[RMDB]
RNA sequence: GGGAACGACUCGAGUAGAGUCGAAAAGACGGCACUCUUCGCCUUGGCAUGUGAAAGAGACGAGUCCUUCCAUUGUCAACAUCAACGAUGCGGGUCUUGAGUGGAUCCCACAGAGCCGGGGAAGUAACACCGAGAAAGUGUUCGCACUUUCUCGGUGAAAAGAAACAACAACAACAAC
Reactivity to 2A3 in 0.01 (KOAc 150mM, MgCl2 10mM, bicine 150mM(pH8.5), 24C), signal-to-noise 1, nucleotides 027 to 126: g050a010c060g040g090c050a010c040u070c000u080u060c020g050c030c000u030u080g070g010c060a060u040g060u050g110a140a050a050g060a000g000a060c050g030a030g090u000c000c010u020u060c070c000a100u040u080g060u030c030a030a000c020a220u020c000a070a050c120g050a050u050g040c050g000g040g010u010c010u030u020g040a000g020u120g040g010a030u010c010c000c030a010c030a000g100a000g000c000c030g000g000g000g010a020a000g010u050a050a000
Reactivity to DMS in 0.01 (KOAc 150mM, MgCl2 10mM, bicine 150mM(pH8.5), 24C), signal-to-noise 2, nucleotides 027 to 126: g030a080c040g010g000c040a140c030u000c000u000u000c150g010c030c050u000u010g010g000c050a090u010g010u000g000a050a040a020g000a130g000a110c120g020a090g000u000c020c030u010u000c030c000a100u000u010g040u000c080a070a120c130a030u000c070a060a080c100g020a030u000g000c100g010g010g000u000c030u010u000g000a140g010u000g000g010a090u000c000c010c020a090c070a060g000a220g010c040c020g000g010g000g010a090a060g000u000a100a160

The data come from the RNA Mapping Database (RMDB), library OK2TST.
Structure probing data (2A3 and DMS) for a 177-nucleotide construct.
Values cover nucleotides 27 to 126.
The RNA was probed in 150 mM KOAc, 10 mM MgCl2 and 150 mM bicine (pH 8.5) at 24 C.
The DMS profile rests on 1,218 reads.
For DMS the reverse transcriptase was MarathonRT.